[RMDB]
This 177-nucleotide RNA was probed chemically with DMS and 2A3. It was measured as part of the RMDB libraries RFM100 and RFMREP. Values cover nucleotides 27 to 126. Conditions: 150 mM KOAc, 10 mM MgCl2 and 150 mM bicine (pH 8.5), 24 C. DMS adducts were read by reverse transcription with MarathonRT.

RNA sequence: GGGAACGACUCGAGUAGAGUCGAAAAAUGUAGAGGUUGCGAUGAAUUUUGGAUUGUUCUCUCAAGUUAGCAGGCAGGUCACUUUUCUCUUUUACGAAGGACUUCGAGUGCACUGGGGUCAGCAUAGCAGUAGACCAGUUUUCGAACUGGUCUACUGAAAAGAAACAACAACAACAAC
Reactivity to DMS in 0.01 (KOAc 150mM, MgCl2 10mM, bicine 150mM(pH8.5), 24C), signal-to-noise 4, nucleotides 027 to 126: a060u020g000u010a050g030a060g010g030u020u010g000c060g000a070u020g010a040a070u020u010u000u010g000g000a120u000u000g000u010u000c050u000c030u000c100a060a100g010u010u000a090g010c070a040g000g040c030a040g010g000u010c020a040c070u000u000u020u000c080u000c020u000u020u000u010a120c100g020a060a070g000g000a060c090u000u010c060g010a070g030u020g020c060a040c090u010g000g000g000g020u010c040a080g010c100a080u010a070g020
Reactivity to 2A3 in 0.01 (KOAc 150mM, MgCl2 10mM, bicine 150mM(pH8.5), 24C), signal-to-noise 4, nucleotides 027 to 126: a000u130g030u050a000g010a030g030g060u040u030g060c040g010a040u030g050a130a160u080u030u090u110g060g000a030u040u050g040u100u010c060u010c010u010c040a030a070g020u040u090a010g050c010a000g060g020c000a010g000g060u020c010a060c060u040u010u140u080c030u040c000u010u130u030u030a100c080g030a060a020g060g020a010c010u070u010c050g020a040g010u070g000c000a010c040u010g010g000g000g040u040c040a030g020c030a070u080a080g040